About this RNA:
This 177-nucleotide RNA was probed chemically with 2A3 and DMS. 2A3 adducts were read by reverse transcription with SuperScript II with manganese. For 2A3, 6,224 sequencing reads were counted. The DMS profile rests on 3,669 reads. Source: RMDB library TTRDES, as collected in RNAgym. DMS adducts were read by reverse transcription with MarathonRT.
RNA sequence: GGGAACGACUCGAGUAGAGUCGAAAAGAUAUGGACUGCAGUGAUAGGGAGCGAUGGGAUCGGAAACGAUCCCAAUCGCGAAGAACUAUCAUUGUGCAGUCCUAAGUCAAAGCGCGGUUCGCCGCGCGAAGUCGUAGUUCUUCGGAACUACGACUUCAAAAGAAACAACAACAACAAC
Reactivity to 2A3 in 0.01 (KOAc 150mM, MgCl2 10mM, bicine 150mM(pH8.5), 24C), signal-to-noise 2, nucleotides 027 to 126: g030a010u050a050u150g000g000a000c010u010g010c000a050g010u020g100a010u020a000g030g000g000a040g000c000g000a010u010g000g030g000a010u010c010g010g010a070a030a020c010g000a010u000c010c010c000a010a130u000c000g000c010g010a110a010g000a000a000c020u010a000u010c030a040u110u240g120u040g050c010a000g010u000c010c000u000a050a020g010u000c070a090a110a070g000c020g000c020g010g130u080u120c300g040c140c000g000c020g000c010
Reactivity to DMS in 0.01 (KOAc 150mM, MgCl2 10mM, bicine 150mM(pH8.5), 24C), signal-to-noise 3, nucleotides 027 to 126: g010a040u010a300u000g000g000a020c000u000g010c010a090g020u010g000a010u000a010g020g000g000a060g040c000g030a020u000g000g000g010a020u010c000g000g000a080a030a140c010g010a010u000c000c000c000a000a000u000c000g020c010g000a060a140g000a150a210c000u000a010u000c010a190u000u000g010u020g020c010a010g000u010c000c000u000a010a070g000u000c040a090a100a230g010c010g030c000g000g020u000u010c300g020c000c000g020c000g030c010